[RMDB]
RNA sequence: GGGAACGACUCGAGUAGAGUCGAAAAAAUCGUCGACGCAUCGACGACGGUCCUGCCAUGAGACCGUAAUGAGGACAUGUCGCCUCGAAUGGCGUCGGGGAGCCGGCAGCUUACCCCAAGGAUGAGCAAAAGAAUGAAACGUUCGCGUUUCAUUCAACGUGAGUAGUUCGUUCGCGAACUACUCACGAAAAGAAACAACAACAACAAC
Reactivity to 2A3 in 0.01 (KOAc 150mM, MgCl2 10mM, bicine 150mM(pH8.5), 24C), signal-to-noise 1, nucleotides 027 to 156: a000a000u030c090g090u000c000g030a010c070g010c120a080u090c010g010a010c000g020a000c000g010g000u000c000c000u010g100c000c010a080u140g050a130g040a200c000c030g000u040a020a010u070g010a030g000g000a070c090a040u280g040u120c040g030c000c010u050c000g000a080a020u050g030g000c000g010u030c000g000g040g010g000a020g040c000c020g090g010c040a040g020c050u020u080a130c040c000c040c000a010a070g130g020a080u080g000a070g060c050a070a000a000a180g010a000a000u000g000a000a000a000c010g000u010u050c190g080c000g010u030u100u000c000a000u000u000c000a000a000